[RMDB]
RNA sequence: GGGAACGACUCGAGUAGAGUCGAAAAAGCAGGAGUACGCUCCUGCAUGGGUAGACGAAUUGACCCCAACUGAAGUUCAAUUUUAACGUUAAAAGGAGUUUUAUAUGACUGGACGUACGCGUCCAGAUGACGAUUUCAUUCUUCGGAAUGAAAUCAACUCUCUAAAUAAGUUCGCUUAUUUAGAGAGAAAAGAAACAACAACAACAAC
Reactivity to 2A3 in 0.01 (KOAc 150mM, MgCl2 10mM, bicine 150mM(pH8.5), 24C), signal-to-noise 3, nucleotides 027 to 156: a010g000c000a000g010g020a000g010u060a040c160g010c090u000c010c000u010g000c000a000u020g030g000g050u170a130g040a150c100g040a080a030u020u020g020a020c010c000c010c000a070a050c100u220g040a020a010g010u090u010c010a000a020u020u000u060u160a080a030c050g030u090u180a030a020a030a030g170g010a100g020u060u050u140u080a220u080a090u170g160a050c000u000g000g000a000c010g010u040a000c210g010c000g120u010c000c000a000g000a000u040g040a010c100g000a000u000u000u000c010a000u010u010c000u030u070c150g050g000a000a000u010g000a010a000a000u000c000a000a000
Reactivity to DMS in 0.01 (KOAc 150mM, MgCl2 10mM, bicine 150mM(pH8.5), 24C), signal-to-noise 1, nucleotides 027 to 156: a140g010c010a030g010g020a060g060u000a050c300g030c030u000c060c000u000g000c030a010u000g010g000g020u000a100g020a120c080g020a070a130u010u010g000a070c000c000c000c040a130a180c200u010g000a040a060g000u000u000c040a020a110u000u000u010u010a030a170c070g030u000u000a070a100a050a040g000g010a240g000u000u000u000u000a090u010a070u040g010a170c000u010g010g000a000c000g020u010a110c300g000c030g020u000c000c000a020g010a020u010g000a110c100g020a020u010u000u000c000a000u010u000c000u000u010c300g020g010a020a020u020g010a000a000a000u010c010a040a100
The record gives the reactivity of an RNA of 207 nucleotides to 2A3 and DMS. The data come from the RNA Mapping Database (RMDB), library M2RFPK. For 2A3, 1,909 sequencing reads were counted. Conditions: 150 mM KOAc, 10 mM MgCl2 and 150 mM bicine (pH 8.5), 24 C. For 2A3 the reverse transcriptase was SuperScript II with manganese.